This 177-nucleotide RNA was probed chemically with DMS and 2A3.
The RNA was probed in 150 mM KOAc, 10 mM MgCl2 and 150 mM bicine (pH 8.5) at 24 C.
2A3 adducts were read by reverse transcription with SuperScript II with manganese.
2A3 is a SHAPE reagent: it acylates the 2'-hydroxyl of flexible nucleotides of all four kinds.
The 2A3 profile rests on 4,147 reads.
RNA sequence: GGGAACGACUCGAGUAGAGUCGAAAAAACCCGUGCGCGCAGUGAAAGCGAACGGAGGUGGGAGCCCGCAAGGGUGCACCAUCGACCGAUCCUGAAGUCUUCGGAUGGAUUUGAGUAAGAGCGUGGCCAGUAGGGAUUUGUUCGCAAAUCCCUACUGAAAAGAAACAACAACAACAAC
Reactivity to DMS in 0.01 (KOAc 150mM, MgCl2 10mM, bicine 150mM(pH8.5), 24C), signal-to-noise 5, nucleotides 027 to 126: a070a040c010c000c000g010u020g000c030g010c010g030c020a130g030u020g010a110a080a080g020c110g010a040a070c030g000g000a300g000g010u000g000g000g010a300g000c020c010c020g020c270a090a100g010g000g010u010g000c100a300c020c000a010u000c000g000a080c020c000g000a030u000c020c020u000g000a200a090g000u010c060u000u000c070g000g000a030u000g000g000a100u010u010u020g010a080g020u010a120a070g010a130g000c010g010u000g010g010c050
Reactivity to 2A3 in 0.01 (KOAc 150mM, MgCl2 10mM, bicine 150mM(pH8.5), 24C), signal-to-noise 5, nucleotides 027 to 126: a000a000c010c010c000g000u070g040c040g000c010g030c010a070g040u060g130a190a120a060g050c050g020a020a000c010g000g020a010g000g010u010g010g030g000a030g040c000c000c000g010c070a050a040g050g000g000u030g030c130a070c040c000a000u010c000g060a170c000c010g010a030u040c000c000u040g050a070a030g040u030c050u060u190c120g070g000a030u040g010g030a030u040u060u110g080a060g010u070a090a030g010a010g050c020g000u040g130g020c020